[RMDB]
RNA sequence: GGGAACGACUCGAGUAGAGUCGAAAAGGUACUAGUCUUCGGACUAGUACCAAAGGGGCGGUAGCUCAGCCUGGGAGAGCACCGGACUGAAGAUCCGGGUGUCGGGGGUUCAAAUCCCCCCCGCCCCACCAAACACGUUCGUGUUCGCACGAACGUGGCACAGCUUUAAGUUCGCUUAAAGCUGUGCAAAAGAAACAACAACAACAAC
Reactivity to 2A3 in 0.01 (KOAc 150mM, MgCl2 10mM, bicine 150mM(pH8.5), 24C), signal-to-noise 1, nucleotides 027 to 156: g000g000u000a010c000u010a010g010u010c020u030u140c300g000g010a000c000u000a000g000u000a000c000c000a010a010a010g000g010g000g000c000g000g000u020a010g010c000u010c010a000g010c000c010u070g040g170g020a010g000a000g010c000a000c010c000g010g000a020c040u180g140a190a060g020a170u000c000c000g000g020g030u120g000u050c000g010g030g010g000g000u000u000c000a010a000a000u000c010c000c010c020c000c040c010g000c000c010c000c000a000c000c000a000a000a000c010a000c000g010u000u000c000g000u010g010u100u050c240g000c090a000c000g000a000a000c000g010u000g000